Record summary
Structure probing data (2A3 and DMS) for a 177-nucleotide construct. For DMS, 965 sequencing reads were counted. The 2A3 profile rests on 1,701 reads. Conditions: 150 mM KOAc, 10 mM MgCl2 and 150 mM bicine (pH 8.5), 24 C. The data come from the RNA Mapping Database (RMDB), library OK2TST.
RNA sequence: GGGAACGACUCGAGUAGAGUCGAAAACGCACCAUCUGGCUGCGCCUGAAGCUGAUUGCCGAUGCGGGACUGGUGGGCUUGCCCAAUGCGGGAAAAUCCACUUUUCUGGCAAGCGUGACGGCUGCAAGUCGGCAGUAGUGUUCGCACUACUGCCGACAAAAGAAACAACAACAACAAC
Reactivity to 2A3 in 0.01 (KOAc 150mM, MgCl2 10mM, bicine 150mM(pH8.5), 24C), signal-to-noise 2, nucleotides 027 to 126: c040g020c000a010c020c000a080u160c160u220g040g020c100u000g020c020g080c030c040u040g060a050a010g000c010u040g030a300u070u150g020c010c000g030a070u100g000c060g030g020g010a010c020u040g000g000u010g000g000g040c020u030u100g030c000c000c000a100a170u300g040c170g010g010g000a030a080a000a040u030c000c000a000c000u040u020u010u000c020u000g100g000c020a040a020g010c030g070u030g000a010c020g050g020c010u060g000c030a030a040
Reactivity to DMS in 0.01 (KOAc 150mM, MgCl2 10mM, bicine 150mM(pH8.5), 24C), signal-to-noise 1, nucleotides 027 to 126: c070g000c030a110c050c020a070u010c100u010g030g010c130u010g000c050g010c010c040u010g000a140a030g000c010u000g000a130u000u010g020c030c000g030a140u000g080c040g010g000g000a010c070u000g010g030u000g000g000g010c030u000u000g020c010c000c030a170a120u000g030c170g010g000g000a020a010a010a060u000c030c030a030c100u000u000u000u000c010u020g030g030c000a030a070g030c140g020u000g010a130c160g000g000c000u000g050c130a040a110